[RMDB]
RNA sequence: GGGAACGACUCGAGUAGAGUCGAAAAUAUUAUAGCGCACUAAAGACGCUGAUCUUUAGUUACCAAGGAACUUUAGUGGUGAGGUCCGAGUUCCAAGGUCCCAUGUCGGACCUUAGCACUAAUUGAAGCAUGUGUUCCUAUUCGUAGGAACACAUGCAAAAGAAACAACAACAACAAC
Reactivity to 2A3 in 0.01 (KOAc 150mM, MgCl2 10mM, bicine 150mM(pH8.5), 24C), signal-to-noise 2, nucleotides 027 to 126: u130a020u110u200a120u140a190g090c070g000c080a010c050u030a020a000a000g020a000c040g040c300u140g080a200u040c010u000u020u000a020g020u010u040a070c000c070a040a030g050g030a040a180c000u050u020u000a010g020u070g040g160u010g010a010g060g000u070c030c010g000a000g060u240u060c060c010a000a020g030g010u000c000c000c020a050u090g050u000c010g000g000a010c010c000u010u020a010g050c010a000c020u010a000a070u080u070g130a120a010
Reactivity to DMS in 0.01 (KOAc 150mM, MgCl2 10mM, bicine 150mM(pH8.5), 24C), signal-to-noise 1, nucleotides 027 to 126: u040a100u010u010a070u020a060g000c050g010c210a050c000u000a000a010a020g000a030c010g020c150u020g010a070u000c010u000u000u000a010g010u000u010a090c090c070a050a080g020g010a160a080c050u010u010u000a020g040u010g010g000u010g040a000g020g000u010c000c010g000a060g000u010u000c270c120a050a090g000g010u010c010c020c000a090u000g000u000c030g000g000a010c010c000u000u000a000g000c020a010c000u000a010a030u000u000g010a160a090

The record gives the reactivity of an RNA of 177 nucleotides to 2A3 and DMS. The DMS profile rests on 877 reads. High 2A3 reactivity points to a flexible backbone, as in loops and unpaired stretches. Values cover nucleotides 27 to 126. The reactions ran in a buffer of 150 mM KOAc, 10 mM MgCl2 and 150 mM bicine (pH 8.5), at 24 C. DMS adducts were read by reverse transcription with MarathonRT.